Source: RMDB library TTRDEL, as collected in RNAgym. Chemical mapping of a 177-nucleotide RNA with DMS and 2A3. The RNA was probed in 150 mM KOAc, 10 mM MgCl2 and 150 mM bicine (pH 8.5) at 24 C. For 2A3 the reverse transcriptase was SuperScript II with manganese.
[RMDB]
RNA sequence: GGGAACGACUCGAGUAGAGUCGAAAAGAUAUGGAGGCGAACGAUAAGUUCCCUGUCGGAAACGACAGAGCGAACUUUUGACGUUCGCUCCUAAGUCAAAAGGUGGUCCUCUUCGGAGGACCACCAACUCAUUCUUAUCCUUCGGGAUAAGAAUGAGAAAAGAAACAACAACAACAAC
Reactivity to DMS in 0.01 (KOAc 150mM, MgCl2 10mM, bicine 150mM(pH8.5), 24C), signal-to-noise 3, nucleotides 027 to 126: g000a050u010a300u000g010g000a040g010g000c000g020a010a020c000g010a110u000a020a010g010u000u000c000c020c010u000g000u000c000g010g010a110a080a180c010g010a000c000a000g020a090g040c160g020a000a010c000u010u000u000u000g010a190c060g010u000u000c000g000c000u000c000c000u010a050a140g000u000c020a090a050a160a140g020g020u010g010g000u000c000c000u000c000u010u010c180g020g000a010g020g000a000c000c010a000c000c030a010a020
Reactivity to 2A3 in 0.01 (KOAc 150mM, MgCl2 10mM, bicine 150mM(pH8.5), 24C), signal-to-noise 3, nucleotides 027 to 126: g050a030u120a050u180g030g010a060g170g300c000g000a000a010c010g010a060u060a190a040g010u010u010c000c000c010u010g010u010c000g010g030a070a070a060c010g000a000c000a000g030a020g030c210g000a010a010c020u060u100u150u200g230a090c010g010u000u000c000g010c000u000c000c000u000a020a000g060u000c030a000a030a040a200g030g000u000g020g010u000c000c010u010c020u110u150c300g110g000a000g020g000a000c000c000a000c000c000a000a000